[RMDB]
RNA sequence: GGGAACGACUCGAGUAGAGUCGAAAAGAUAUGGACACAAGGGAGCUCCUGGCUCGGAAACGAGCCCUGAGCGACGAUCUUGGUCCUAAGUCAAACCUUAACACGGGCUUCGGCCCGUGUUAAGGAACAUUGAGAUAUGGUUCGCCAUAUCUCAAUGAAAAGAAACAACAACAACAAC
Reactivity to DMS in 0.01 (KOAc 150mM, MgCl2 10mM, bicine 150mM(pH8.5), 24C), signal-to-noise 7, nucleotides 027 to 126: g010a030u000a300u000g000g000a010c000a110c020a010a010g000g000g000a050g010c000u000c000c030u000g000g020c010u000c000g010g000a070a080a160c000g010a010g010c000c000c030u000g000a010g020c000g010a060c240g000a020u010c010u000u000g000g000u000c000c000u010a020a080g000u000c030a120a140a210c000c000u000u000a000a010c000a010c000g010g000g000c010u000u010c230g020g000c000c000c000g010u000g000u000u000a000a000g010g000a060a070
Reactivity to 2A3 in 0.01 (KOAc 150mM, MgCl2 10mM, bicine 150mM(pH8.5), 24C), signal-to-noise 5, nucleotides 027 to 126: g020a020u060a030u150g000g000a060c100a010c000a300a000g000g000g010a010g010c000u010c020c040u010g000g010c000u000c010g020g020a080a080a030c000g000a000g000c000c010c010u000g000a010g010c020g090a050c010g000a010u010c010u000u010g010g000u000c010c000u020a140a010g030u000c050a090a060a220c000c000u000u000a000a000c000a000c030g020g000g020c020u120u170c300g180g000c010c000c000g000u000g000u000u000a000a000g000g000a000a000